[RMDB]
RNA sequence: GGGAACGACUCGAGUAGAGUCGAAAAGUCUGUGAUGCCCUUAGAUGUCCUGGGCCGCACGCGUGCUACACUGAUGAGUAGAAUGGGUUAAUACUGCAUUUAUUGCUUUCCCUUGACCGAGAGGUCUAAUUCCAUGAUGUUUCGACAUCAUGGAAUUAAAAGAAACAACAACAACAAC
Reactivity to DMS in 0.01 (KOAc 150mM, MgCl2 10mM, bicine 150mM(pH8.5), 24C), signal-to-noise 9, nucleotides 027 to 126: g010u010c050u010g010u010g010a070u010g000c010c010c020u000u010a090g010a110u020g000u010c060c040u000g000g000g010c030c050g000c050a050c060g020c070g010u010g000c030u000a060c070a090c070u000g010a110u010g000a080g030u000a030g010a070a050u010g010g010g000u010u010a070a070u010a060c070u000g010c020a040u010u000u000a070u030u010g010c040u010u010u000c010c000c010u010u010g000a010c000c000g000a220g000a190g010g000u000c010u010
Reactivity to 2A3 in 0.01 (KOAc 150mM, MgCl2 10mM, bicine 150mM(pH8.5), 24C), signal-to-noise 9, nucleotides 027 to 126: g040u030c060u050g060u040g050a070u130g030c000c000c000u030u070a140g010a160u120g050u100c020c020u050g010g020g000c000c010g020c010a020c020g060c020g030u060g010c010u050a030c040a020c070u100g070a100u060g030a080g040u050a030g040a110a070u090g050g000g020u070u110a080a040u070a140c020u040g060c020a040u050u070u070a140u160u140g020c010u020u010u010c010c000c000u020u070g000a000c000c000g010a030g010a020g070g000u000c000u000
Annotation:
The record gives the reactivity of an RNA of 177 nucleotides to DMS and 2A3. DMS adducts were read by reverse transcription with MarathonRT. Reactivities are given for positions 27 through 126. Conditions: 150 mM KOAc, 10 mM MgCl2 and 150 mM bicine (pH 8.5), 24 C. The data come from the RNA Mapping Database (RMDB), libraries RFM100 and RFMREP. For 2A3 the reverse transcriptase was SuperScript II with manganese.